[RMDB]
RNA sequence: GGGAACGACUCGAGUAGAGUCGAAAAUACACUUUACGUGUGCUGGUUUCAUUACUUUGUCCCAAACCACGCACGCGUAAUUAAAGGCCAGUUUGGCCAGGUCCGCGUUAUCGAUGGUCACCAAUAACAUAAGCAUACGAUUCGUCGUAUGCUUAUGAAAAGAAACAACAACAACAAC
Reactivity to DMS in 0.01 (KOAc 150mM, MgCl2 10mM, bicine 150mM(pH8.5), 24C), signal-to-noise 9, nucleotides 027 to 126: u010a110c130a150c100u000u000u000a010c010g020u000g010u000g010c010u000g000g000u000u000u000c120a100u010u010a090c160u000u000u010g010u000c030c020c030a060a030a020c000c000a020c240g020c020a010c000g010c000g000u000a000a000u000u000a050a100a090g010g020c010c000a120g010u010u010u000g020g020c010c010a040g000g010u000c030c020g010c050g010u000u010a080u000c050g010a070u000g010g010u000c060a100c060c060a080a080u010a090a170
Reactivity to 2A3 in 0.01 (KOAc 150mM, MgCl2 10mM, bicine 150mM(pH8.5), 24C), signal-to-noise 8, nucleotides 027 to 126: u100a010c050a030c070u020u020u000a000c010g000u010g000u010g000c000u000g000g010u030u050u080c090a100u080u190a160c110u160u170u220g090u090c000c020c000a000a010a010c020c010a020c140g000c000a000c000g000c000g000u000a000a010u040u080a110a050a010g020g010c000c010a090g110u110u220u170g050g000c000c000a010g000g030u000c020c010g010c030g030u060u090a130u140c050g030a120u080g030g010u040c020a020c080c040a060a100u110a110a030